Conditions: 150 mM KOAc, 10 mM MgCl2 and 150 mM bicine (pH 8.5), 24 C. Structure probing data (DMS and 2A3) for a 177-nucleotide construct. The 2A3 profile rests on 700 reads. The DMS profile rests on 2,080 reads. 2A3 adducts were read by reverse transcription with SuperScript II with manganese.
RNA sequence: GGGAACGACUCGAGUAGAGUCGAAAAACUGGCACAAUAAUUUUAAAAAGGCCUGUAUAAAUUACCUCCUUGUGCAGCUGCAGCACGUUGGUAAUGCAGAGGACAUCAACCCCUGUAGCGGGAAACCUCCUACUGAAGGAUUCGUCCUUCAGUAGGAAAAAGAAACAACAACAACAAC
Reactivity to DMS in 0.01 (KOAc 150mM, MgCl2 10mM, bicine 150mM(pH8.5), 24C), signal-to-noise 2, nucleotides 027 to 126: a110c040u000g010g000c020a040c050a080a080u010a050a050u000u040u060u020a050a090a180a280a220g010g000c030c000u010g000u000a170u000a050a080a030u010u020a020c020c000u000c020c050u020u030g040u000g010c030a160g020c020u000g000c020a030g000c050a020c010g000u000u020g030g000u000a010a050u020g000c120a040g000a020g000g000a100c110a050u040c110a080a140c050c020c060c050u000g010u000a090g000c020g000g000g010a080a070a090c140c030
Reactivity to 2A3 in 0.01 (KOAc 150mM, MgCl2 10mM, bicine 150mM(pH8.5), 24C), signal-to-noise 2, nucleotides 027 to 126: a040c010u010g020g060c010a010c060a170a180u200a050a070u020u040u160u300a170a130a050a000a000g040g000c010c000u000g040u050a190u070a020a130a000u010u020a000c000c000u000c000c030u120u110g000u050g000c050a030g010c040u070g010c000a000g030c000a000c070g020u000u050g000g020u000a010a010u020g000c000a020g050a040g070g010a010c020a100u090c020a030a150c040c000c010c000u060g030u110a040g030c070g000g030g000a000a010a000c000c000